[RMDB]
RNA sequence: GGGAACGACUCGAGUAGAGUCGAAAAGAGGUGUCCAUGGCGCUGAAUGGCUCGUCCAAUAGGAUAACAUCAGGUCCAUAGGCCAAUAUUCUAGCUAAUGCAACCCUUUGCUGCUGGCCUCCGGAUAGCCAGUAGGACCUUUCGAGGUCCUACUGGCAAAAGAAACAACAACAACAAC
Reactivity to 2A3 in 0.01 (KOAc 150mM, MgCl2 10mM, bicine 150mM(pH8.5), 24C), signal-to-noise 3, nucleotides 027 to 126: g080a020g010g000u040g000u060c020c020a030u030g000g000c060g010c060u060g040a160a120u110g040g020c060u040c140g040u000c020c000a110a130u180a200g010g030a030u050a110a090c030a050u080c040a010g000g020u000c030c010a020u020a100g010g000c000c010a040a060u140a090u150u060c020u040a040g000c020u110a110a060u080g020c000a000a150c020c010c000u030u160u060g010c010u020g040c010u010g000g010c000c010u040c020c010g100g000a070u080a050
Reactivity to DMS in 0.01 (KOAc 150mM, MgCl2 10mM, bicine 150mM(pH8.5), 24C), signal-to-noise 1, nucleotides 027 to 126: g000a060g040g070u040g000u010c020c020a000u000g000g020c030g020c000u000g020a090a000u000g020g010c080u040c040g000u000c000c030a190a070u070a080g000g000a060u000a050a080c050a120u010c010a000g030g000u000c020c060a020u000a060g000g010c000c010a050a060u010a030u000u010c080u000a050g000c100u000a120a020u000g000c150a020a180c060c000c010u000u010u000g050c030u000g000c000u000g000g000c060c000u000c000c080g010g000a020u020a090